[RMDB]
An RNA of 177 nucleotides, treated with 2A3 and DMS and read out base by base. High 2A3 reactivity points to a flexible backbone, as in loops and unpaired stretches. Conditions: 150 mM KOAc, 10 mM MgCl2 and 150 mM bicine (pH 8.5), 24 C. Reactivities are given for positions 27 through 126. For 2A3 the reverse transcriptase was SuperScript II with manganese. The data come from the RNA Mapping Database (RMDB), libraries RFM100 and RFMREP.
RNA sequence: GGGAACGACUCGAGUAGAGUCGAAAACCACCGUUAUCGGGUCAACAGAGUAGUUGCAAAUGACAACAAUGCUCAGGGUUAUGCUCUCGCUGCCUAAUGGCGGUGCGGGAAACCCACUCUAAAGUCCAGUCAUACGUAGUUUCGACUACGUAUGACUAAAAGAAACAACAACAACAAC
Reactivity to 2A3 in 0.01 (KOAc 150mM, MgCl2 10mM, bicine 150mM(pH8.5), 24C), signal-to-noise 9, nucleotides 027 to 126: c010c000a020c010c010g100u120u120a090u240c050g000g000g050u090c040a040a030c040a080g020a000g020u050a020g020u030u020g000c020a060a210a280u230g080a100c010a040a010c000a030a170u110g020c020u040c080a090g020g000g000u050u030a120u300g060c000u000c000u000c010g000c010u010g000c010c000u240a300a130u140g000g000c000g000g000u010g000c020g000g000g000a010a010a020c010c010c000a030c020u060c010u090a130a120a020g040u040c050c030
Reactivity to DMS in 0.01 (KOAc 150mM, MgCl2 10mM, bicine 150mM(pH8.5), 24C), signal-to-noise 4, nucleotides 027 to 126: c000c000a090c120c130g010u010u010a060u030c040g000g010g010u010c100a090a150c180a020g010a030g020u000a060g020u000u020g000c030a090a060a080u030g010a080c090a080a020c050a100a160u010g030c050u000c120a120g000g000g010u000u000a080u070g000c040u000c000u000c010g010c000u000g020c010c000u030a150a080u030g000g020c000g000g040u000g010c060g000g000g010a010a030a030c000c000c010a130c060u010c020u040a130a140a130g000u030c050c080